Chemical mapping of a 177-nucleotide RNA with DMS and 2A3. Values cover nucleotides 27 to 126.
RNA sequence: GGGAACGACUCGAGUAGAGUCGAAAAAAGCUCAUUGUGAACUAGAGCAUUCGGGGUCUUAUUUUAGUCUGUCUCCGCUUAAAUGUCUGGGAUCAGCUGUGGAUUGGCCUAGCACAAUAUCAGUUUGGCAUGCAUUGGUAUUCGUACCAAUGCAUGCAAAAGAAACAACAACAACAAC
Reactivity to DMS in 0.01 (KOAc 150mM, MgCl2 10mM, bicine 150mM(pH8.5), 24C), signal-to-noise 1, nucleotides 027 to 126: a080a020g020c010u000c040a080u000u010g020u010g020a120a060c050u030a080g000a110g010c020a130u010u000c040g010g030g000g010u020c060u000u010a090u010u010u000u000a040g010u000c020u010g020u000c020u000c040c070g000c090u000u000a070a100a090u000g010u000c030u030g000g000g000a070u000c100a030g000c050u000g030u020g020g010a080u000u000g020g030c000c020u000a040g000c050a070c090a030a050u000a110u010c150a100g020u000u010u000g010
Reactivity to 2A3 in 0.01 (KOAc 150mM, MgCl2 10mM, bicine 150mM(pH8.5), 24C), signal-to-noise 1, nucleotides 027 to 126: a000a000g010c000u000c020a030u090u040g070u020g060a070a130c040u020a050g010a000g040c010a020u050u030c040g030g000g020g100u010c060u100u130a130u050u180u030u040a040g010u000c020u030g040u000c010u000c040c010g040c040u130u030a090a150a150u170g040u010c040u020g050g000g040a100u100c020a020g070c010u030g000u050g140g000a070u010u000g050g030c000c040u000a000g000c040a000c000a100a000u040a040u120c010a020g160u010u150u100g050

Source information:
The 2A3 profile rests on 988 reads.